Source: RMDB library OK2TRN, as collected in RNAgym. This 177-nucleotide RNA was probed chemically with 2A3 and DMS. 2A3 adducts were read by reverse transcription with SuperScript II with manganese. For DMS, 3,422 sequencing reads were counted. Values are in units of 0.01, from 0 to 300, in steps of 10.

RNA sequence: GGGAACGACUCGAGUAGAGUCGAAAACGCGCUCAUUUCCAGCGACGAUGCAUCCGCGAGAUUCGGAUAGCGCGCCUUCAUUGCAGUGAUCAGUUCUCCGGAAUUUCUCGCUUUCGCGGCUUCCGCACAUAAUACGCCGGUUCGCCGGCGUAUUAUGAAAAGAAACAACAACAACAAC
Reactivity to 2A3 in 0.01 (KOAc 150mM, MgCl2 10mM, bicine 150mM(pH8.5), 24C), signal-to-noise 2, nucleotides 027 to 126: c000g010c010g000c000u030c050a160u090u100u040c050c010a010g000c020g070a070c060g020a040u100g020c050a110u010c030c000g000c040g040a000g010a040u090u090c030g020g000a010u020a040g070c050g000c030g020c020c030u090u180c030a120u040u300g020c000a030g020u020g060a080u080c000a010g030u050u010c010u000c010c010g090g070a070a070u070u100u000c080u020c010g020c000u110u030u090c090g020c000g000g000c010u030u040c030c010g000c030a050
Reactivity to DMS in 0.01 (KOAc 150mM, MgCl2 10mM, bicine 150mM(pH8.5), 24C), signal-to-noise 3, nucleotides 027 to 126: c080g010c030g010c120u020c110a140u000u000u000c090c050a140g000c030g000a050c090g000a070u000g010c170a090u000c020c040g000c120g010a060g000a130u010u000c010g000g010a010u000a050g020c040g010c060g000c080c090u000u000c150a130u010u020g020c060a120g010u000g020a050u010c050a110g000u000u010c010u000c010c020g030g000a050a100u000u000u000c030u000c020g010c040u000u010u010c110g010c050g010g010c190u000u000c020c020g000c090a270